Overview
Structure probing data (2A3) for a 177-nucleotide construct. The reactions ran in a buffer of 150 mM KOAc, 10 mM MgCl2 and 150 mM bicine (pH 8.5), at 24 C. For 2A3 the reverse transcriptase was SuperScript II with manganese. Reactivities are given for positions 27 through 126.
RNA sequence: GGGAACGACUCGAGUAGAGUCGAAAAGAAGGGUAGUAAAACUCCACGUCAUCAUUUGAAAAGUAACCUAAAUAUCCCUGUUCAUCCGCUCUGAAUGUAUCUAAAGAGUUGGCAUUCAUUUUAAAAGGCAGCUCAUAGGUUUCGACCUAUGAGCUGCAAAAGAAACAACAACAACAAC
Reactivity to 2A3 in 0.01 (KOAc 150mM, MgCl2 10mM, bicine 150mM(pH8.5), 24C), signal-to-noise 1, nucleotides 027 to 126: g200a100a020g030g000g000u090a000g110u210a030a000a110a140c000u030c000c000a000c050g050u100c000a040u000c000a030u000u000u210g000a000a000a010a010g020u050a020a020c020c020u020a020a020a020u100a050u050c020c020c000u050g230u170u220c000a150u150c000c000g080c020u000c040u000g070a180a090u080g000u160a030u220c030u210a220a120a000g020a020g000u130u070g110g080c000a020u040u040c000a000u150u200u000u000a070a020a070a070g100